Background: Structure probing data (2A3 and DMS) for a 177-nucleotide construct. The DMS profile rests on 2,401 reads. In probing experiments dimethyl sulfate is read out at A N1 and C N3, which are open when not base-paired. The reactions ran in a buffer of 150 mM KOAc, 10 mM MgCl2 and 150 mM bicine (pH 8.5), at 24 C. 2A3 adducts were read by reverse transcription with SuperScript II with manganese. DMS adducts were read by reverse transcription with MarathonRT. The data come from the RNA Mapping Database (RMDB), library M2PK50.

RNA sequence: GGGAACGACUCGAGUAGAGUCGAAAAUCAUCCAAGUUCGCUUGGAUGAAACGGUACUGAAGCUAAAAACGAUCCGAGGCAACAGUACCAUUAAAGGAUCGACAGCCUGCAAAUUCGUUUGCAGGAAUCUAUUGCUGUACUUCGGUACAGCAAUAGAAAAAGAAACAACAACAACAAC
Reactivity to 2A3 in 0.01 (KOAc 150mM, MgCl2 10mM, bicine 150mM(pH8.5), 24C), signal-to-noise 2, nucleotides 027 to 126: u010c000a020u010c000c000a010a010g010u010u060c160g000c090u000u000g000g000a010u010g000a000a010a010c090g010g000u000a000c010u010g000a050a010g020c080u200a150a030a090a100a080c020g010a020u000c020c010g060a050g120g000c000a030a010c000a010g000u000a000c000c000a000u000u020a040a010a010g010g000a010u000c020g030a040c040a050g070c000c030u000g000c010a000a020a050u090u080c220g060u050u020u010g000c020a000g010g000a000a020
Reactivity to DMS in 0.01 (KOAc 150mM, MgCl2 10mM, bicine 150mM(pH8.5), 24C), signal-to-noise 3, nucleotides 027 to 126: u020c000a010u000c000c000a000a000g020u000u030c200g030c020u010u000g020g000a010u000g010a000a100a080c210g000g010u000a010c000u000g010a030a300g000c020u000a050a040a070a060a100c040g030a030u000c020c000g030a110g020g000c010a040a250c010a000g000u010a010c010c000a060u010u010a070a080a040g000g000a030u020c010g010a300c260a110g000c010c000u000g000c010a010a010a030u000u020c230g000u000u000u000g000c000a000g010g000a040a010